This 177-nucleotide RNA was probed chemically with DMS and 2A3. DMS adducts were read by reverse transcription with MarathonRT. 2A3 is a SHAPE reagent: it acylates the 2'-hydroxyl of flexible nucleotides of all four kinds.

[RMDB]
RNA sequence: GGGAACGACUCGAGUAGAGUCGAAAAGAUAUGGAGGGACUCAGGGAGAUACAGGUCGGAAACGACCUGUCUAUCGACGAUCUGACUCCCUCCUAAGUCAAAAGAUGGUUCCGUUCGCGGAACCAUCGAACGAAUUCUUCUUCGGAAGAAUUCGUUCAAAAGAAACAACAACAACAAC
Reactivity to DMS in 0.01 (KOAc 150mM, MgCl2 10mM, bicine 150mM(pH8.5), 24C), signal-to-noise 2, nucleotides 027 to 126: g000a020u000a190u000g000g000a020g000g000g000a020c240u010c010a010g000g010g010a030g000a020u000a030c010a010g000g010u000c010g040g000a050a010a070c010g010a000c000c010u010g010u010c280u000a050u000c010g000a150c300g000a040u010c000u010g010a030c200u000c000c000c000u010c010c000u000a000a060g000u000c020a120a090a170a180g000a040u000g000g000u000u000c010c000g040u000u000c180g030c020g010g010a010a010c000c000a000u000c010
Reactivity to 2A3 in 0.01 (KOAc 150mM, MgCl2 10mM, bicine 150mM(pH8.5), 24C), signal-to-noise 1, nucleotides 027 to 126: g030a020u040a020u120g000g000a020g000g000g020a020c020u020c080a000g000g050g000a120g010a030u030a010c000a010g000g000u000c000g010g020a020a030a010c000g000a000c000c030u000g000u010c000u040a010u010c000g270a250c070g040a080u000c010u020g000a050c020u040c000c000c000u000c010c000u000a000a000g000u010c010a030a000a050a220g000a000u010g020g040u010u000c050c020g000u090u090c300g010c040g140g000a030a000c030c010a000u010c020
The reactions ran in a buffer of 150 mM KOAc, 10 mM MgCl2 and 150 mM bicine (pH 8.5), at 24 C.